The record gives the reactivity of an RNA of 177 nucleotides to 2A3 and DMS. The DMS profile rests on 5,069 reads. Values cover nucleotides 27 to 126. DMS adducts were read by reverse transcription with MarathonRT. The 2A3 profile rests on 1,742 reads. 2A3 adducts were read by reverse transcription with SuperScript II with manganese.
RNA sequence: GGGAACGACUCGAGUAGAGUCGAAAAGGAACCGUCACGACCGACGGGGCGACGGAUUGGGGUGGCUCGGCGGGGUUCUGGACGUCCCCGUGAUGGAGCGCGGCCCGGAGACCAGGCAAAUCCGGUCUCAGGGCGCACUCUUCGGAGUGCGCCCUGAAAAAGAAACAACAACAACAAC
Reactivity to 2A3 in 0.01 (KOAc 150mM, MgCl2 10mM, bicine 150mM(pH8.5), 24C), signal-to-noise 3, nucleotides 027 to 126: g100g000a000a040c010c000g010u010c010a000c150g150a130c050c110g040a040c050g010g010g010g000c000g000a010c020g020g020a070u050u130g040g000g040g040u070g000g020c000u000c010g050g000c020g000g040g000g000u150u010c030u140g080g100a030c090g080u050c000c000c020c000g040u120g040a160u120g130g040a000g000c030g010c000g040g050c000c000c000g000g010a040g010a010c010c040a110g040g000c030a050a020a100u100c040c010g050g010u000c040
Reactivity to DMS in 0.01 (KOAc 150mM, MgCl2 10mM, bicine 150mM(pH8.5), 24C), signal-to-noise 3, nucleotides 027 to 126: g030g000a070a130c020c020g000u020c010a070c190g030a150c100c070g000a080c090g010g000g000g020c070g010a120c040g010g000a140u030u010g000g010g050g040u000g020g000c020u000c020g000g050c020g010g020g010g000u020u020c030u010g020g000a170c130g030u000c000c000c000c000g020u010g010a080u030g000g010a030g020c060g010c070g010g000c010c000c020g000g000a030g020a090c020c010a140g000g030c160a100a060a130u010c040c010g000g020u000c020